An RNA of 177 nucleotides, treated with DMS and read out base by base. For DMS the reverse transcriptase was MarathonRT.

[RMDB]
RNA sequence: GGGAACGACUCGAGUAGAGUCGAAAAGAUAUGGUUGUUUUCGGUGCAUGUUUGAUUACUAAAAGUUGGGGCAUUCGAUGGUUUACAGAAGUCAUAAAUUCAAAUAUCCCGUUUAAUCGCUCAUCUACAAGGUAAUACCCUUCGGGGUAUUACCUUGAAAAGAAACAACAACAACAAC
Reactivity to DMS in 0.01 (KOAc 150mM, MgCl2 10mM, bicine 150mM(pH8.5), 24C), signal-to-noise 1, nucleotides 027 to 126: g000a120u000a130u010g030g030u010u000g030u000u000u010u000c020g020g040u000g020c070a060u000g020u000u010u000g000a080u000u000a060c190u000a080a070a050a090g040u020u000g020g010g000g000c010a050u000u000c040g000a060u010g040g050u000u000u010a100c240a100g010a080a030g000u000c110a090u000a050a070a120u010u000c080a010a030a110u000a080u000c000c000c000g000u030u000u000a090a020u000c080g020c100u020c030a030u000c060u000a140